[RMDB]
RNA sequence: GGGAACGACUCGAGUAGAGUCGAAAAGGAAUGUCGGGGAAAGUCAGGAGAAUACAGAACGUCACACAGCUGGCGACGUGAGUCGCAACAUGCACUCCCUCCUUGGAGUGCAGCAGCAUCACUGAUGUCAACUCCGUACCUUCGGGUACGGAGUUGAAAAAGAAACAACAACAACAAC
Reactivity to 2A3 in 0.01 (KOAc 150mM, MgCl2 10mM, bicine 150mM(pH8.5), 24C), signal-to-noise 2, nucleotides 027 to 126: g060g010a130a040u050g010u020c040g000g020g000g060a060a060a100g080u050c010a060g050g070a020g050a080a020u120a080c080a020g180a190a040c010g010u000c030a030c040a020c000a090g000c050u070g010g000c030g010a010c020g080u120g080a050g030u040c040g040c000a000a040c010a050u020g000c000a000c000u000c050c000c000u170c080c060u120u270g000g000a010g020u000g000c010a000g020c000a000g000c000a010u100c030a020c070u110g020a040u180g040
Reactivity to DMS in 0.01 (KOAc 150mM, MgCl2 10mM, bicine 150mM(pH8.5), 24C), signal-to-noise 2, nucleotides 027 to 126: g010g000a080a110u000g000u010c050g020g000g000g010a080a070a050g030u010c100a080g050g050a120g040a090a110u020a160c200a090g010a080a100c100g040u000c020a080c110a080c200a080g000c030u000g000g020c030g050a000c000g000u040g000a080g000u000c040g010c040a060a030c160a110u000g030c020a000c000u000c010c000c270u070c080c110u070u010g020g000a010g040u000g000c000a000g010c030a020g020c000a070u030c140a070c160u080g000a040u000g000
This 177-nucleotide RNA was probed chemically with 2A3 and DMS. The reactions ran in a buffer of 150 mM KOAc, 10 mM MgCl2 and 150 mM bicine (pH 8.5), at 24 C. Reactivities are given for positions 27 through 126. For 2A3, 1,032 sequencing reads were counted. For DMS, 2,159 sequencing reads were counted.